[RMDB]
RNA sequence: GGGAACGACUCGAGUAGAGUCGAAAAGAAGGUGACGAACGUGAGACCACCUCAGGUCAGAGGAAACACUAGAUGAAGUGACAUCAACGUAACGAACAGCUGAGUUCGACAGCAAAGUCACCGAAAAGGGUAAGAAUCACUUCGGUGAUUCUUACCCAAAAGAAACAACAACAACAAC
Reactivity to 2A3 in 0.01 (KOAc 150mM, MgCl2 10mM, bicine 150mM(pH8.5), 24C), signal-to-noise 1, nucleotides 027 to 126: g140a000a060g000g000u000g000a000c000g050a190a000c050g000u040g010a170g040a000c000c000a010c010c080u010c000a050g010g050u090c000a020g080a000g080g120a030a300a140c170a000c070u000a050g040a210u040g000a120a000g060u080g050a010c000a000u000c000a000a050c050g000u060a050a090c000g010a010a010c000a000g040c050u050g010a000g090u110u120c020g160a150c000a090g000c060a040a040a040g000u040c000a000c000c000g000a000a000a000a000
Reactivity to DMS in 0.01 (KOAc 150mM, MgCl2 10mM, bicine 150mM(pH8.5), 24C), signal-to-noise 2, nucleotides 027 to 126: g000a150a030g010g050u010g000a010c010g000a040a080c010g010u020g000a250g000a210c150c020a100c020c030u000c030a040g070g020u050c050a000g000a190g040g000a090a050a100c130a010c160u000a120g000a110u040g000a030a040g000u020g000a110c050a210u000c050a030a050c080g040u000a040a080c150g000a020a000c040a130g000c130u060g000a130g000u010u050c040g000a110c090a000g010c020a010a020a180g030u000c000a000c000c000g000a000a050a100a080